Description
Structure probing data (2A3 and DMS) for a 177-nucleotide construct. For 2A3 the reverse transcriptase was SuperScript II with manganese. For DMS the reverse transcriptase was MarathonRT. It was measured as part of the RMDB library OK2TRN. Values are in units of 0.01, from 0 to 300, in steps of 10.
[RMDB]
RNA sequence: GGGAACGACUCGAGUAGAGUCGAAAAUGGUUUUAGGCAGCCUAGAGGGGCCUAGAGGACACUGAGCCAGGCAUCAGGAGGGCUGCGUGCUAAAACUUCGUGUGCUGCCAUCUCUCUCCACAUCCAAUCGUUCUCUAUAGUUCGCUAUAGAGAACGAAAAAGAAACAACAACAACAAC
Reactivity to 2A3 in 0.01 (KOAc 150mM, MgCl2 10mM, bicine 150mM(pH8.5), 24C), signal-to-noise 3, nucleotides 027 to 126: u090g020g010u040u030u020u050a040g020g000c010a000g020c040c010u050a080g030a090g070g010g020g010c000c010u110a120g110a140g200g030a020c090a020c300u170g030a050g050c020c010a020g000g010c010a100u040c020a050g130g050a060g070g020g000c000u020g020c020g000u040g010c000u050a030a030a010a020c000u080u080c090g050u060g010u060g050c020u020g000c010c020a050u030c020u010c000u010c000u000c020c010a050c010a130u020c030c000a060a050
Reactivity to DMS in 0.01 (KOAc 150mM, MgCl2 10mM, bicine 150mM(pH8.5), 24C), signal-to-noise 4, nucleotides 027 to 126: u000g010g020u010u000u010u000a040g010g020c010a020g000c000c000u010a240g010a190g010g010g000g000c020c000u010a060g010a190g020g000a060c050a170c150u000g000a140g010c000c020a120g010g000c010a080u010c020a060g010g010a200g000g000g010c000u000g000c060g020u000g010c000u000a010a020a040a040c010u000u000c120g000u000g020u010g010c010u000g000c030c030a070u010c030u000c020u000c020u010c020c030a060c130a070u010c040c050a110a170